[RMDB]
RNA sequence: GGGAACGACUCGAGUAGAGUCGAAAAGACGGUACAAAGAGCUGCAAGACCGCGAGGUGGAGCUAAUCUCAUAAAACCGUUCUCAGUUCGGAUUGUAGGCUGCAACUCGCCUACAUGAAGCUGGAAUUGAAAUCACGAUUUUCGAAUCGUGAUUUCAAAAAGAAACAACAACAACAAC
Reactivity to 2A3 in 0.01 (KOAc 150mM, MgCl2 10mM, bicine 150mM(pH8.5), 24C), signal-to-noise 5, nucleotides 027 to 126: g030a010c020g000g000u100a030c060a070a110a010g020a000g000c060u040g000c020a010a050g020a040c000c010g020c040g020a060g020g000u020g010g030a010g000c000u040a030a100u050c010u010c000a020u200a060a050a010a020c000c010g020u080u000c030u000c010a040g020u140u220c010g010g010a000u000u000g000u000a000g010g010c010u060g040c060a070a070c080u070c140g000c000c000u000a000c000a000u010g020a010a010g000c030u050g020g060a110a140u040
Reactivity to DMS in 0.01 (KOAc 150mM, MgCl2 10mM, bicine 150mM(pH8.5), 24C), signal-to-noise 5, nucleotides 027 to 126: g000a010c010g000g020u000a020c080a080a110a080g010a020g030c300u000g030c020a050a300g000a030c000c000g000c280g000a140g000g000u000g030g000a300g000c000u010a030a050u020c000u000c030a040u050a100a050a070a010c000c000g030u010u020c010u020c020a030g010u030u030c020g020g000a080u000u000g020u000a000g000g000c020u050g010c210a180a180c200u030c120g000c020c000u000a000c000a000u000g000a210a110g000c050u010g000g030a070a100u030